Notes
Source: RMDB library OK1LIB, as collected in RNAgym. Structure probing data (DMS and 2A3) for a 177-nucleotide construct. 2A3 adducts were read by reverse transcription with SuperScript II with manganese.
[RMDB]
RNA sequence: GGGAACGACUCGAGUAGAGUCGAAAAGGAUUAGGUAACAUUGGUGCUGAAGCAUCUAUACCUGUUAUGGAAGGUAAAGCUAUAUUAUUUAAACAAUUUGCAGAUGUAGACGCUUUUCCAAUAUGUUAUAUGCAUCGUGAUUCGUCACGAUGCAUAUAAAAGAAACAACAACAACAAC
Reactivity to DMS in 0.01 (KOAc 150mM, MgCl2 10mM, bicine 150mM(pH8.5), 24C), signal-to-noise 2, nucleotides 027 to 126: g000g000a020u020u000a000g000g000u000a050a110c180a050u030u030g000g010u000g010c030u030g030a100a060g030c000a040u000c000u000a040u000a060c010c030u000g000u020u010a060u010g000g020a120a050g000g010u000a010a010a190g020c070u090a110u010a120u010u000a060u010u020u030a060a080a060c050a060a100u030u050u030g000c100a010g000a060u000g000u000a000g030a070c050g000c000u000u000u000u000c010c000a070a050u030a130u040g020u020u000
Reactivity to 2A3 in 0.01 (KOAc 150mM, MgCl2 10mM, bicine 150mM(pH8.5), 24C), signal-to-noise 4, nucleotides 027 to 126: g150g040a080u120u110a060g080g030u090a050a060c080a120u140u150g050g020u070g020c120u170g080a140a040g020c000a000u000c000u000a050u030a000c000c000u000g050u160u140a110u100g010g120a090a000g060g010u090a020a040a030g020c030u030a030u030a040u290u060a060u090u060u140a140a200a110c080a100a120u130u080u280g050c080a030g000a060u040g000u040a020g000a030c020g000c000u050u120u000u060c010c000a060a070u070a070u140g050u010u030
For 2A3, 1,395 sequencing reads were counted. For DMS the reverse transcriptase was MarathonRT. The RNA was probed in 150 mM KOAc, 10 mM MgCl2 and 150 mM bicine (pH 8.5) at 24 C.